Chemical mapping of a 207-nucleotide RNA with 2A3. For 2A3 the reverse transcriptase was SuperScript II with manganese.
RNA sequence: GGGAACGACUCGAGUAGAGUCGAAAAGGUCGGGGUUCGCCCCGACCGUCGCGUACUACGACGAUGUGGCGUCUCCCCACCUACGCUCCCAAAUAGGAGCGUAGAGGACGAACUACCAUUGUCGUCGUAUCGCCAUCUGAGCCCUUUCGAGGGCUCAUCCACAAAGUAGCUUCGGCUACUUUGUGGAAAAAGAAACAACAACAACAAC
Reactivity to 2A3 in 0.01 (KOAc 150mM, MgCl2 10mM, bicine 150mM(pH8.5), 24C), signal-to-noise 1, nucleotides 027 to 156: g000g010u010c000g000g020g020g020u070u160c280g160c020c000c000c000g000a000c000c000g010u000c090g000c010g010u070a060c020u000a000c050g000a000c000g060a010u010g010u010g020g040c030g000u030c030u070c050c000c000c000a020c000c000u000a000c000g000c000u010c000c000c020a280a250a010u300a170g000g000a000g000c000g000u000a000g000a000g000g030a000c010g020a210a190c030u030a050c150c070a010u000u180g070u010c030g010u000c000g010u000a010u300c010g040c040c000a150u050c150u100g020a000g000c020c000c060u040u100u080c300g130a060g000g000g000c000u000c000a000
For 2A3, 583 sequencing reads were counted.